[RMDB]
RNA sequence: GGGAACGACUCGAGUAGAGUCGAAAACAGGGUUUUCUUUAGCUGUUGGAGAGUCGCUGGUUGGCUCGCUCGAUGGUGGGACUAUGCGAUUCGCAGUAUCAACAGGACCUUCCACCGCUGCCCCCACCCCUUCCCCUCCCUUCGGGGAGGGGAAGGGAAAAGAAACAACAACAACAAC
Reactivity to 2A3 in 0.01 (KOAc 150mM, MgCl2 10mM, bicine 150mM(pH8.5), 24C), signal-to-noise 1, nucleotides 027 to 126: c000a000g070g000g000u070u000u030u020c000u030u080u090a000g000c000u000g120u080u090g000g000a000g000a010g000u040c030g150c300u000g090g100u130u130g140g050c050u050c060g000c000u000c050g090a020u200g000g000u090g050g000g010a010c000u090a040u210g020c020g050a080u100u170c030g000c070a000g000u080a010u230c050a010a100c090a090g020g020a000c020c030u000u000c030c030a020c000c000g020c000u050g000c010c000c000c000c000a050c000

About this RNA:
Conditions: 150 mM KOAc, 10 mM MgCl2 and 150 mM bicine (pH 8.5), 24 C. An RNA of 177 nucleotides, treated with 2A3 and read out base by base. Values cover nucleotides 27 to 126.